Description: Conditions: 150 mM KOAc, 10 mM MgCl2 and 150 mM bicine (pH 8.5), 24 C. This 177-nucleotide RNA was probed chemically with DMS and 2A3. 2A3 adducts were read by reverse transcription with SuperScript II with manganese. The DMS profile rests on 800 reads. It was measured as part of the RMDB library M2PK50. For DMS the reverse transcriptase was MarathonRT.

RNA sequence: GGGAACGACUCGAGUAGAGUCGAAAAGAGUAUAGCUUCGGCUAUACUCAAAACACAACAUGCAGCGCUCUAGGUGUGUAGUGACAGUAAGCGCGCAAAUAAAAACGACAGGGUUCGCCCUGUCGAAGUUCAACGAAAUGUUCGCAUUUCGUUGAACAAAAGAAACAACAACAACAAC
Reactivity to DMS in 0.01 (KOAc 150mM, MgCl2 10mM, bicine 150mM(pH8.5), 24C), signal-to-noise 1, nucleotides 027 to 126: g010a000g000u000a010u000a000g000c010u030u010c240g060g010c010u000a000u000a010c000u000c000a030a010a070a090c050a090c090a040a060c080a120u000g030c050a110g000c040g000c040u020c130u010a030g010g030u000g010u000g000u000a180g020u040g000a060c070a030g000u000a050a050g040c010g000c000g020c090a060a060a080u000a020a120a020a220a060c010g020a010c000a000g010g040g010u000u030c300g000c010c010c040u000g010u010c000g010a000a040
Reactivity to 2A3 in 0.01 (KOAc 150mM, MgCl2 10mM, bicine 150mM(pH8.5), 24C), signal-to-noise 1, nucleotides 027 to 126: g010a000g000u000a000u000a000g000c010u040u050c300g100g000c000u010a000u010a010c000u030c000a000a010a000a010c010a000c010a040a110c010a020u090g020c030a030g010c050g020c000u010c040u130a110g200g020u000g040u030g020u130a110g090u060g220a030c040a080g060u080a060a030g020c000g010c000g000c010a020a080a010u120a020a030a030a010a010c020g000a000c010a010g000g020g040u050u080c120g100c030c010c010u000g000u000c000g000a000a010